[RMDB]
RNA sequence: GGGAACGACUCGAGUAGAGUCGAAAACUGCGACAAUACAUUCUAUGUCUGACCAACACCAUAUACUACUUAUAUGGAUAUAAGUAGACCACACCACACUACUACUACUACUACUACAAAUUGUAAGUGGGAUCGGUACUUUCGAGUACCGAUCCCAAAAAGAAACAACAACAACAAC
Reactivity to 2A3 in 0.01 (KOAc 150mM, MgCl2 10mM, bicine 150mM(pH8.5), 24C), signal-to-noise 2, nucleotides 027 to 126: c040u210g000c010g020a060c000a000a080u060a010c020a020u000u110c000u140a110u300g040u000c040u010g020a010c000c020a010a080c000a050c000c000a040u230a000u050a300c090u000a000c000u000u000a000u000a000u160g060g080a060u170a000u070a220a000g000u000a000g000a030c030c030a050c000a000c020c000a070c070a000c000u080a000c000u000a000c000u000a000c000u050a040c000u010a000c040u040a050c100a040a220a200u120u100g100u050a190a070g060
This 177-nucleotide RNA was probed chemically with 2A3. The reactions ran in a buffer of 150 mM KOAc, 10 mM MgCl2 and 150 mM bicine (pH 8.5), at 24 C. It was measured as part of the RMDB library OK1LIB.